[RMDB]
An RNA of 207 nucleotides, treated with 2A3 and DMS and read out base by base.
2A3 adducts were read by reverse transcription with SuperScript II with manganese.
Conditions: 150 mM KOAc, 10 mM MgCl2 and 150 mM bicine (pH 8.5), 24 C.
RNA sequence: GGGAACGACUCGAGUAGAGUCGAAAAUUAUGUUACAGCUCGCCAACGUGCCGAACGCUUAAUUGAGAAGAUGAAAAAAGUUGGUAAACUUGACAUGCAGCACUGGAAAGUAGUAAAAUAAUUGUUUACUUUGGUACAGGAUAUGAUAUUAUAUACCUCCUCCCUUGUUAUUCGUAACAAGGGAGGAAAAAGAAACAACAACAACAAC
Reactivity to 2A3 in 0.01 (KOAc 150mM, MgCl2 10mM, bicine 150mM(pH8.5), 24C), signal-to-noise 1, nucleotides 027 to 156: u030u020a070u100g080u030u070a010c040a050g000c000u050c050g000c010c030a070a050c030g000u040g060c030c070g030a040a020c010g060c100u220u170a080a020u180u160g010a050g000a000a070g010a030u100g190a100a000a000a000a000a070g030u060u040g030g040u010a180a010a000c030u010u010g030a000c000a030u050g030c020a000g000c000a000c010u050g000g070a150a000a000g100u140a020g010u030a040a130a000a090u070a030a030u090u050g010u010u090u000a030c000u000u000u000g010g000u000a000c050a000g000g000a020u010a010u090g000a000u010a010u290u170a080u140a020u120a110c050c200
Reactivity to DMS in 0.01 (KOAc 150mM, MgCl2 10mM, bicine 150mM(pH8.5), 24C), signal-to-noise 2, nucleotides 027 to 156: u000u000a070u000g000u000u000a020c030a250g010c000u000c060g030c060c000a040a110c120g030u000g040c020c070g000a160a130c080g020c010u000u000a040a180u000u020g030a120g040a120a110g030a140u020g010a000a070a100a090a090a090g030u000u000g040g010u010a020a050a070c020u000u010g000a020c020a100u000g040c060a030g040c050a050c050u000g010g010a070a020a080g020u000a090g010u000a040a030a070a100u010a040a060u000u000g000u000u000u010a070c020u000u000u000g000g030u000a030c000a050g020g000a300u000a070u000g010a160u010a050u000u000a070u000a210u010a080c060c060
It was measured as part of the RMDB library OK3TST.